The record gives the reactivity of an RNA of 177 nucleotides to DMS and 2A3. DMS adducts were read by reverse transcription with MarathonRT. The DMS profile rests on 5,334 reads. Reactivities are given for positions 27 through 126.

[RMDB]
RNA sequence: GGGAACGACUCGAGUAGAGUCGAAAACGACGACAAGCCGUCGGGCAGCUCCGACGAAACGUUGGCCGAGCUGAUUGCGCACAGCAGCACCGCGCCCGCCCCGAAGGCGAGCCGCCGUGCGUCGAUCGAAGGAAUUGAUGUUCGCAUCAAUUCCUUCAAAAGAAACAACAACAACAAC
Reactivity to DMS in 0.01 (KOAc 150mM, MgCl2 10mM, bicine 150mM(pH8.5), 24C), signal-to-noise 5, nucleotides 027 to 126: c030g010a040c030g000a020c030a060a130g010c070c000g020u000c010g010g000g010c110a180g020c190u010c010c020g010a030c010g000a040a100a060c060g000u010u000g010g030c060c020g010a160g010c070u010g000a060u000u010g020c010g000c010a050c020a050g020c020a130g020c030a080c090c140g010c040g000c020c020c050g000c060c000c040c170g020a130a190g000g000c000g000a080g010c020c030g020c010c040g000u000g000c020g000u010c050g000a030u000c070
Reactivity to 2A3 in 0.01 (KOAc 150mM, MgCl2 10mM, bicine 150mM(pH8.5), 24C), signal-to-noise 4, nucleotides 027 to 126: c020g010a000c020g020a040c050a100a050g060c040c000g000u010c020g010g030g010c070a100g040c050u020c060c010g020a020c000g030a100a050a000c060g030u040u070g120g000c050c000g030a020g050c050u070g040a100u040u120g050c020g000c010a020c020a050g020c000a010g010c030a040c060c080g020c040g020c020c010c020g060c000c020c000c040g170a080a020g010g010c000g000a010g010c040c050g000c020c010g010u020g010c010g050u070c090g030a060u060c060